[RMDB]
RNA sequence: GGGAACGACUCGAGUAGAGUCGAAAAGAUAUGGACGUGAGACCGCGAAACAUACUCGGAAACGAGUAUGGAACCGAACUACGGUCUCAACGUCCUAAGUCAAAAGUAGAUUCUUCGGAAUCUACAAGUAAUCCUUCUCGUUCGCGAGAAGGAUUACAAAAGAAACAACAACAACAAC
Reactivity to 2A3 in 0.01 (KOAc 150mM, MgCl2 10mM, bicine 150mM(pH8.5), 24C), signal-to-noise 1, nucleotides 027 to 126: g010a010u000a000u050g000g000a000c000g000u010g000a020g000a000c000c000g230c140g150a030a010a010c040a020u000a000c000u000c020g050g000a010a020a010c000g030a000g020u000a020u010g020g020a030a010c120c040g100a200a070c110u160a120c170g010g020u030c000u000c000a020a020c010g000u010c000c000u000a000a000g010u000c000a120a080a000a000g000u000a000g000a000u010u030c020u060u150c300g020g000a020a000u010c000u020a000c000a000a000
Reactivity to DMS in 0.01 (KOAc 150mM, MgCl2 10mM, bicine 150mM(pH8.5), 24C), signal-to-noise 1, nucleotides 027 to 126: g020a000u010a270u010g030g000a020c010g030u000g000a020g010a040c000c010g000c050g050a140a110a070c000a000u000a010c000u000c000g000g000a110a030a100c030g030a000g010u010a000u000g000g000a040a070c070c070g000a070a040c210u000a150c000g030g000u010c000u000c000a000a010c000g050u000c010c000u000a000a050g000u000c040a110a070a070a240g000u000a000g000a040u000u000c000u000u030c270g000g000a030a000u000c010u020a000c000a100a100
An RNA of 177 nucleotides, treated with 2A3 and DMS and read out base by base. As a SHAPE reagent, 2A3 marks flexible, mostly unpaired nucleotides at the ribose 2'-OH. DMS adducts were read by reverse transcription with MarathonRT. It was measured as part of the RMDB library TTRDEL.